[RMDB]
RNA sequence: GGGAACGACUCGAGUAGAGUCGAAAAAGGGUUUUCUCAAGCAAGUAAAUAUCUGCAAAUGAACUAUGACCUAGUCUUUAUGGAAUUCUGGAGCAUCUUCAACACAUCUUAUCUCCUAGGAUUUCUAAAGUAUGGCAAGGUUCGCCUUGCCAUACUUAAAAGAAACAACAACAACAAC
Reactivity to DMS in 0.01 (KOAc 150mM, MgCl2 10mM, bicine 150mM(pH8.5), 24C), signal-to-noise 2, nucleotides 027 to 126: a120g000g030g000u000u000u000u020c010u010c000a170a160g030c030a040a040g020u000a040a090a150u000a080u020c060u000g020c100a070a110a060u010g010a070a100c150u000a100u010g020a060c090c010u000a130g020u010c060u000u000u010a060u010g030g010a010a030u000u000c020u000g040g000a040g050c300a050u000c050u000u010c150a060a070c130a050c080a040u010c060u000u010a090u000c060u000c010c020u010a050g010g010a050u010u020u000c000u000a030
Reactivity to 2A3 in 0.01 (KOAc 150mM, MgCl2 10mM, bicine 150mM(pH8.5), 24C), signal-to-noise 1, nucleotides 027 to 126: a000g000g010g000u050u000u050u000c040u000c000a070a050g000c030a000a110g020u300a110a120a240u190a180u050c020u040g010c030a060a070a000u120g020a030a030c040u050a080u180g030a030c000c000u060a050g100u050c050u040u130u010a040u120g010g000a010a020u060u010c000u070g040g030a030g100c030a120u120c010u280u170c030a250a000c030a020c000a060u050c100u020u140a050u090c010u050c020c020u030a060g050g020a120u040u020u000c000u010a020
The record gives the reactivity of an RNA of 177 nucleotides to DMS and 2A3. For 2A3 the reverse transcriptase was SuperScript II with manganese. It was measured as part of the RMDB library OK2TST.